[RMDB]
The record gives the reactivity of an RNA of 177 nucleotides to DMS and 2A3. 2A3 adducts were read by reverse transcription with SuperScript II with manganese.
RNA sequence: GGGAACGACUCGAGUAGAGUCGAAAAGAAAGGCAGCCAGUGCAGCCCACGAAGCCAUUCGAAGCAUGCUUUUGCAUGCCGCCCACGACUGAGGGCAGCUGCGGCACUGAGGGCAGCUGCCGAAAGACCGAUAUCCAUCAUUCGUGAUGGAUAUCGGAAAAGAAACAACAACAACAAC
Reactivity to DMS in 0.01 (KOAc 150mM, MgCl2 10mM, bicine 150mM(pH8.5), 24C), signal-to-noise 2, nucleotides 027 to 126: g010a040a030a110g000g040c040a020g000c020c000a030g010u020g020c040a140g020c050c050c080a170c110g010a090a100g010c020c030a060u000u000c100g010a190a150g000c010a010u000g000c010u010u000u010u010g000c020a000u000g000c010c150g010c020c010c000a120c140g000a050c150u000g010a120g010g010g010c000a070g010c000u000g000c010g010g020c020a090c080u030g000a140g000g000g000c020a050g020c000u000g000c010c000g000a060a070a120g020a260
Reactivity to 2A3 in 0.01 (KOAc 150mM, MgCl2 10mM, bicine 150mM(pH8.5), 24C), signal-to-noise 2, nucleotides 027 to 126: g050a010a050a020g010g000c010a010g060c000c040a020g000u020g040c010a060g050c010c090c000a040c090g050a080a010g060c020c030a070u050u030c020g050a020a000g000c010a010u010g000c000u120u200u260u300g000c000a000u010g000c020c000g020c000c000c000a050c060g190a060c090u150g120a140g090g040g000c000a000g000c010u020g020c000g030g010c060a020c060u100g060a210g020g070g000c000a000g000c000u030g000c000c010g000a000a000a000g020a010
DMS adducts were read by reverse transcription with MarathonRT. It was measured as part of the RMDB library OK2TRN. The DMS profile rests on 1,813 reads.